[RMDB]
RNA sequence: GGGAACGACUCGAGUAGAGUCGAAAAACUCUUACUUCGGUAAGAGUAAAAAGCGUACUACUUCGGAGGGUGGGUUUCGACGCCCGGUCCCAAAUAGGACCGGCGUGCCCACCUACCCACCCGAAGUAUCGCAAAAACUGUUGCUUCGGCAACAGAAGUGUCUAGUACUAUUCGUAGUACUAGACACAAAAGAAACAACAACAACAAC
Reactivity to 2A3 in 0.01 (KOAc 150mM, MgCl2 10mM, bicine 150mM(pH8.5), 24C), signal-to-noise 3, nucleotides 027 to 156: a000c020u010c020u020u000a010c000u040u030c190g110g000u050a000a000g000a000g000u020a030a090a000a000a020g080c070g020u080a140c060u000a000c000u010u000c010g020g020a050g000g030g000u020g010g050g030u060u110u280c120g120a050c020g050c100c240c040g000g000u010c010c010c020a160a300a220u190a140g000g000a000c010c000g000g000c030g020u000g000c000c000c000a000c000c000u000a000c000c000c000a050c000c000c010g000a000a000g000u000a010u110c000g000c010a000a070a080a000a050c000u000g000u000u000g000c000u030u030c190g110g000c000a000a000c000a000g020a090a020
Reactivity to DMS in 0.01 (KOAc 150mM, MgCl2 10mM, bicine 150mM(pH8.5), 24C), signal-to-noise 1, nucleotides 027 to 156: a060c000u000c020u000u000a000c030u000u000c300g000g000u010a000a040g010a000g020u000a010a000a110a090a070g030c030g000u030a090c170u000a050c020u000u010c010g040g030a300g000g010g040u000g000g010g020u010u000u000c020g040a060c040g010c000c000c030g020g020u000c000c000c080a020a090a220u020a050g040g030a010c010c000g000g010c130g040u000g000c000c000c300a040c020c000u000a000c020c000c000a190c110c040c000g000a000a040g000u000a000u000c000g000c030a040a080a090a060a130c020u000g000u000u010g000c010u000u030c300g020g000c000a010a030c030a010g020a080a170